[RMDB]
RNA sequence: GGGAACGACUCGAGUAGAGUCGAAAAGAUUUAUGGAUUCAGAAUGUCUGGACCCUCUAGUCCCUAUGGCGUUCCUGUCUAUAUUGUGAGCUAUAGGAUAUCAGAUGAGCUAUCCAAGAGUGAUAUCGUAGGUGAUGCACUUCGGUGCAUCACCUACAAAAGAAACAACAACAACAAC
Reactivity to 2A3 in 0.01 (KOAc 150mM, MgCl2 10mM, bicine 150mM(pH8.5), 24C), signal-to-noise 1, nucleotides 027 to 126: g060a010u300u110u140a170u150g080g000a040u000u170c100a000g070a160a120u170g000u050c060u010g000g000a000c000c140c000u080c000u000a060g060u030c000c100c000u000a170u150g030g000c000g040u020u170c000c000u110g140u090c200u090a280u000a180u080u080g000u040g110a000g070c000u000a000u040a000g020g020a040u040a040u000c000a000g000a060u000g000a000g000c000u040a000u000c000c030a000a000g140a080g060u170g040a080u110a100u000c080
This 177-nucleotide RNA was probed chemically with 2A3. It was measured as part of the RMDB library OK1LIB. The RNA was probed in 150 mM KOAc, 10 mM MgCl2 and 150 mM bicine (pH 8.5) at 24 C.